[RMDB]
RNA sequence: GGGAACGACUCGAGUAGAGUCGAAAACUAACACCACUACUAGUGGGAAAAACCAGUGGGGCCACAGGCUGCCCCGAAGUGAAUGUGCUGGGCGGAUCACAGCCCCACCACGUGUCAUGUAGACACCCAGGGCUACAGGAGAGUCAACCAUAUUUGGCCAGAUUAUAGACUUCGGUCUAUAAUCUGGAAAAGAAACAACAACAACAAC
Reactivity to DMS in 0.01 (KOAc 150mM, MgCl2 10mM, bicine 150mM(pH8.5), 24C), signal-to-noise 1, nucleotides 027 to 156: c050u010a020a120c070a110c020c010a000c000u000a300c100u000a100g040u010g000g030g020a040a050a040a090a060c000c010a070g000u010g020g030g080g000c040c010a160c040a060g010g000c070u000g000c020c030c030c010g020a030a060g020u010g050a180a150u010g010u000g030c030u000g000g000g010c010g050g010a140u000c100a100c050a060g000c010c010c000c000a020c000c030a080c040g000u000g060u000c030a170u010g040u000a170g010a050c010a050c000c040c020a080g010g060g010c010u000a080c100a040g010g010a080g000a170g010u000c010a120a140c040c050a120u000a270u000u000u000g020g010
Reactivity to 2A3 in 0.01 (KOAc 150mM, MgCl2 10mM, bicine 150mM(pH8.5), 24C), signal-to-noise 3, nucleotides 027 to 156: c010u030a050a020c010a050c020c020a020c000u130a040c030u100a200g000u030g000g040g050a040a020a000a050a070c010c020a020g010u000g000g010g010g000c020c060a030c040a080g060g000c030u030g000c040c020c010c000g000a020a000g040u080g110a120a190u130g020u030g090c010u040g000g000g000c030g030g000a060u110c000a020c010a070g030c000c030c000c000a010c000c000a020c030g040u070g050u010c020a060u130g060u130a010g010a010c000a000c030c040c030a030g010g010g100c010u040a030c020a020g010g050a080g060a020g030u070c020a020a040c020c010a080u110a200u200u140u080g110g000